[RMDB]
RNA sequence: GGGAACGACUCGAGUAGAGUCGAAAAAAAGAUAUGGAUCGCACGAAGCUUGGAUUUAUGGGAGGCGGAUAUAUCGGAAACGAUAUAUGCCAUCCCAUUGUCAGCUUCCUGCGAUCCUAAGUCAAAACGGAAUUAUACCGUUCGCGGUAUAAUUCCGAAAAGAAACAACAACAACAAC
Reactivity to DMS in 0.01 (KOAc 150mM, MgCl2 10mM, bicine 150mM(pH8.5), 24C), signal-to-noise 1, nucleotides 027 to 126: a120a030a040g000a030u010a300u000g000g000a010u010c010g030c000a050c300g010a000a030g010c000u010u010g070g000a010u020u010u000a010u000g000g000g030a110g020g030c150g040g030a090u010a000u000a000u010c000g000g020a230a060a210c000g030a010u000a010u000a010u000g020c010c010a130u000c000c010c010a000u000u000g000u000c010a070g000c030u000u000c010c040u000g000c000g000a000u000c000c000u010a010a060g010u000c030a030a060a130a270
Reactivity to 2A3 in 0.01 (KOAc 150mM, MgCl2 10mM, bicine 150mM(pH8.5), 24C), signal-to-noise 1, nucleotides 027 to 126: a040a030a000g090a030u120a080u190g000g000a010u010c020g000c000a000c010g000a000a000g000c090u240u250g230g000a060u300u300u280a030u070g000g000g030a000g000g050c060g000g010a010u050a000u000a000u000c040g010g000a090a060a010c020g000a000u000a000u010a000u090g070c010c010a300u030c000c000c000a010u010u010g000u020c010a000g010c000u000u000c000c000u010g040c040g010a020u030c010c000u010a010a010g030u010c040a010a050a050a100